[RMDB]
RNA sequence: GGGAACGACUCGAGUAGAGUCGAAAAUGUGGAAGUCCUGCUCGGGGCGGAAGCAUUACAACCAUUCGAGCUAGUCAAUGCGUGGCGUGUCUCUCCGCAGCGUGUUGGCGAAUGUAAAGAGUGACUAUUGACCACGCAACGUUCGCGUUGCGUGGAAGAAGAGCAAUUCGUUCGCGAAUUGCUCUUCAAAAGAAACAACAACAACAAC
Reactivity to 2A3 in 0.01 (KOAc 150mM, MgCl2 10mM, bicine 150mM(pH8.5), 24C), signal-to-noise 1, nucleotides 027 to 156: u040g020u040g030g030a030a090g000u000c000c000u060g010c040u020c030g000g010g000g000c040g000g020a020a000g010c020a010u120u110a080c030a060a100c070c040a070u080u140c040g010a010g010c000u000a010g000u000c010a000a020u000g020c000g030u050g130g000c030g000u010g010u000c000u010c000u000c000c010g010c020a050g000c000g000u000g040u000u000g000g000c000g020a000a000u060g050u180a000a020a020g000a000g010u010g000a010c000u030a040u040u190g130a050c010c000a000c000g000c040a000a010c020g010u100u060c160g010c010g110u000u000g040c010g010u000g000g000a000a000